[RMDB]
RNA sequence: GGGAACGACUCGAGUAGAGUCGAAAAACCCCUCUUCGGAGGGGUAAAAAGGUGAUGAGCACUCUCGAACCUGACGGGCAGGAUGAUGAGCGGAUUCCUGGCUGAUAAAGUGUCGAUUCGUCGACACCAAGCACAAAAUGUUCGCAUUUUGUGCUUGAAAAGAAACAACAACAACAAC
Reactivity to 2A3 in 0.01 (KOAc 150mM, MgCl2 10mM, bicine 150mM(pH8.5), 24C), signal-to-noise 3, nucleotides 027 to 126: a020c000c000c000c000u000c010u000u030c120g100g010a010g010g020g000g000u070a020a040a000a010a000g070g000u070g020a150u130g010a030g020c090a040c180u170c000u000c030g030a040a040c000c020u040g030a040c030g020g000g040c000a000g010g020a010u060g020a030u080g050a040g120c080g020g030a030u010u020c000c000u030g120g000c020u040g020a090u080a110a140a020g000u010g000u000c000g010a010u040u080c130g020u000c000g090a000c000a000c000
Reactivity to DMS in 0.01 (KOAc 150mM, MgCl2 10mM, bicine 150mM(pH8.5), 24C), signal-to-noise 4, nucleotides 027 to 126: a040c020c000c000c000u000c000u000u030c190g010g010a010g000g010g020g010u010a000a020a040a070a020g010g010u000g020a160u010g030a100g020c150a110c230u000c010u000c020g000a100a080c020c010u000g000a220c100g000g010g000c010a040g020g000a050u010g000a190u010g010a100g020c090g010g000a220u000u000c000c010u010g000g010c040u010g000a100u010a040a070a130g000u000g000u000c000g000a030u000u020c160g020u000c000g010a020c000a010c010